[RMDB]
Structure probing data (DMS) for a 177-nucleotide construct.
RNA sequence: GGGAACGACUCGAGUAGAGUCGAAAAAAUAGGGAAAGGUUAUAGAAGGAUGGAGUUUCUAUAAAGCAUUUACCCUAUCUGUUAUCACCUAACGCAAGUUAUCCACCAUCCAAGCGUCGAAACUGUAUGAAUGUCACCGAUUCGUCGGUGACAUUCAAAAAGAAACAACAACAACAAC
Reactivity to DMS in 0.01 (KOAc 150mM, MgCl2 10mM, bicine 150mM(pH8.5), 24C), signal-to-noise 1, nucleotides 027 to 126: a110a020u000a010g020g000g000a080a050a070g000g000u020u000a020u000a030g000a000a010g040g000a090u050g020g000a190g030u040u020u010c010u000a000u010a030a000a050g000c110a110u000u000u000a080c000c050c000u000a000u020c140u000g000u000u070a020u000c130a020c010c030u000a110a040c110g000c110a070a040g000u020u010a040u000c040c050a070c010c040a060u000c020c040a010a080g010c070g020u010c000g000a070a140a060c050u010g000u030a150